An RNA of 207 nucleotides, treated with 2A3 and DMS and read out base by base. For DMS the reverse transcriptase was MarathonRT. Reactivities are given for positions 27 through 156. For 2A3 the reverse transcriptase was SuperScript II with manganese. For 2A3, 6,206 sequencing reads were counted.
RNA sequence: GGGAACGACUCGAGUAGAGUCGAAAAAUUUUGAGCACUCCUUCUCAUGGCCAUUUCCCUGUAAAUCAGCAGAGACACUGGGGAAUGGAGCAGUUUGACUCCCAUGGCUGCUGGAGUCUCCUUUACUGCCCCGUCUGUCUUGAGCAACACUGGGCUACUCGAUACUUUUAUUCGUAAAAGUAUCGAGAAAAGAAACAACAACAACAAC
Reactivity to 2A3 in 0.01 (KOAc 150mM, MgCl2 10mM, bicine 150mM(pH8.5), 24C), signal-to-noise 7, nucleotides 027 to 156: a000u160u160u080u120g020a020g010c060a030c060u020c010c000u080u060c030u030c030a080u080g040g000c010c010a010u000u020u020c000c000c000u010g070u110a120a150a070u070c040a030g200c050a030g030a020g020a110c050a020c120u040g010g000g000g000a000a000u010g010g000a010g000c000a010g000u060u180u210g090a080c040u040c020c020c020a050u080g070g000c030u030g000c020u030g010g000a000g000u000c020u010c010c010u150u250u160a150c070u090g010c000c010c000c000g020u000c030u030g040u000c020u060u120g030a040g010c010a010a030c010a010c050u020g000g000g000c010u050a040
Reactivity to DMS in 0.01 (KOAc 150mM, MgCl2 10mM, bicine 150mM(pH8.5), 24C), signal-to-noise 3, nucleotides 027 to 156: a080u010u010u000u000g010a050g020c050a140c020u020c070c010u000u000c000u000c000a120u010g000g020c000c020a140u000u000u000c010c010c000u000g010u000a040a160a150u000c080a130g010c060a150g000a160g010a100c160a060c040u000g020g000g020g010a060a040u000g010g010a020g040c040a070g020u000u000u010g020a070c080u000c000c000c030a190u000g010g000c040u000g020c020u010g010g020a300g000u000c010u000c030c010u010u010u000a100c100u000g000c000c010c010c150g000u000c050u010g010u010c020u000u000g020a200g030c030a040a040c050a060c040u000g010g000g040c000u000a130